The data come from the RNA Mapping Database (RMDB), libraries RFM100 and RFMREP. Chemical mapping of a 177-nucleotide RNA with 2A3 and DMS. For DMS the reverse transcriptase was MarathonRT. The RNA was probed in 150 mM KOAc, 10 mM MgCl2 and 150 mM bicine (pH 8.5) at 24 C.

RNA sequence: GGGAACGACUCGAGUAGAGUCGAAAACCACUGGUGAAUGUGGUUGUGUAUGUUACGAGAGGAAAAGUAGUGCCUCGCGGCUUUCGGAUCUCCUUCGGUGUUGGUCUUGAAUUUCGACCAAUGUCAUGCUCUUUUAAACUUUCGAGUUUAAAAGAGCAAAAGAAACAACAACAACAAC
Reactivity to 2A3 in 0.01 (KOAc 150mM, MgCl2 10mM, bicine 150mM(pH8.5), 24C), signal-to-noise 4, nucleotides 027 to 126: c010c000a020c020u080g100g040u100g140a150a060u120g010u030g050g010u100u030g020u030g040u020a120u120g120u040u060a050c040g020a060g010a040g070g110a060a060a060a080g100u110a050g050u040g080c000c000u070c020g020c040g050g000c000u010u110u110c010g070g000a080u010c050u070c000c000u060u070c050g030g020u030g000u020u000g000g010u000c020u050u110g170a270a250u160u190u150c060g000a020c000c000a020a000u050g020u040c010a050u060
Reactivity to DMS in 0.01 (KOAc 150mM, MgCl2 10mM, bicine 150mM(pH8.5), 24C), signal-to-noise 4, nucleotides 027 to 126: c010c000a040c070u030g000g020u010g000a080a090u020g010u010g000g000u000u000g010u010g020u010a060u010g010u000u020a090c060g000a110g010a080g010g000a020a070a050a080g000u000a050g010u010g000c010c010u000c140g030c200g000g000c050u010u020u010c040g010g000a090u010c030u010c010c040u000u020c050g010g010u010g000u000u010g000g000u000c020u050u010g000a110a180u010u000u010c100g000a020c010c020a010a030u000g010u010c030a150u010